[RMDB]
RNA sequence: GGGAACGACUCGAGUAGAGUCGAAAAAUCUGAAUGUAGAUAAACCGAAACCAUUGAUUUUCGGAGAUGAACCUAAUAAGGUUUGGGAAGCUAUCCCGUCUGGUCAAGCAUCGUUAGCAGUUGAUAAGAACACCUCACCGAUUACCGCAACAGUAACGAAGAUACGGAAGUUCGCUUCCGUAUCUUCAAAAGAAACAACAACAACAAC
Reactivity to 2A3 in 0.01 (KOAc 150mM, MgCl2 10mM, bicine 150mM(pH8.5), 24C), signal-to-noise 3, nucleotides 027 to 156: a000u030c040u070g030a070a090u140g040u100a100g010a120u140a100a040a050c040c000g050a040a000a000c060c020a170u040u150g030a120u120u040u000u040c010g000g030a060g010a090u070g060a010a010c000c000u080a140a130u140a240a080g050g010u040u110u100g050g020g010a030a040g040c010u030a070u070c030c000c000g010u000c050u100g010g010u020c040a040a000g050c000a040u080c080g080u090u060a030g000c010a060g010u050u050g050a070u080a130a110g060a030a030c020a020c040c000u040c000a040c060c020g100a060u070u100a040c030c090g010c030a030a040c010a050g160u220a020a020c040
Reactivity to DMS in 0.01 (KOAc 150mM, MgCl2 10mM, bicine 150mM(pH8.5), 24C), signal-to-noise 2, nucleotides 027 to 156: a140u010c040u010g000a140a120u000g000u020a050g030a130u000a070a120a150c000c040g010a080a070a090c130c050a130u010u010g000a170u010u000u020u000c010g050g000a130g010a150u010g010a030a070c030c000u000a070a070u000a140a090g020g020u000u000u020g090g000g010a100a070g000c120u010a140u000c020c000c010g050u000c060u010g000g000u000c020a120a170g040c030a070u000c010g000u010u020a040g000c090a090g020u000u000g000a050u000a080a060g000a040a070c020a090c000c010u010c000a230c050c030g010a090u000u000a060c000c030g040c040a060a070c030a090g030u030a070a130c140
Conditions: 150 mM KOAc, 10 mM MgCl2 and 150 mM bicine (pH 8.5), 24 C. The record gives the reactivity of an RNA of 207 nucleotides to 2A3 and DMS. DMS adducts were read by reverse transcription with MarathonRT.